[RMDB]
RNA sequence: GGGAACGACUCGAGUAGAGUCGAAAACCCUCGGUAAUGGCGAAUGGGACCCAGAAAUCUCUCUAGAUUCCGAUAGAGAAUCGAGAGAAAACUGGCUCUCCCUUAGCCAUCCGAGUGGACGUACGUCGUUAGGAAGAGGGUUCGCCCUCUUCCUAACAAAAGAAACAACAACAACAAC
Reactivity to 2A3 in 0.01 (KOAc 150mM, MgCl2 10mM, bicine 150mM(pH8.5), 24C), signal-to-noise 2, nucleotides 027 to 126: c000c000c010u010c000g000g000u100a130a000u010g000g000c010g050a050a010u050g020g000g020a000c030c000c000a020g020a030a300a010u010c020u000c000u010c040u090a110g000a030u030u020c020c050g140a170u080a150g160a010g000a010a000u010c010g010a000g000a010g000a010a000a000a000c000u000g010g000c010u000c000u000c010c010c000u000u010a000g000c000c010a010u000c010c000g000a020g020u210g040g030a060c060g090u290a030c140g060u070c030
Reactivity to DMS in 0.01 (KOAc 150mM, MgCl2 10mM, bicine 150mM(pH8.5), 24C), signal-to-noise 2, nucleotides 027 to 126: c010c010c000u000c010g010g000u000a030a040u000g000g000c000g010a160a070u000g010g000g010a010c300c000c000a020g000a010a140a180u000c010u010c000u010c000u020a200g020a040u010u000c010c010g000a200u000a150g000a160g020a010a000u000c010g000a000g000a020g000a000a010a100a140c010u010g000g000c020u000c020u000c000c000c000u010u000a300g000c000c000a010u000c000c000g010a030g020u010g000g000a080c090g020u010a070c210g010u000c040

An RNA of 177 nucleotides, treated with 2A3 and DMS and read out base by base. The RNA was probed in 150 mM KOAc, 10 mM MgCl2 and 150 mM bicine (pH 8.5) at 24 C. It was measured as part of the RMDB library VIROID. 2A3 adducts were read by reverse transcription with SuperScript II with manganese. Values are in units of 0.01, from 0 to 300, in steps of 10. The DMS profile rests on 1,653 reads.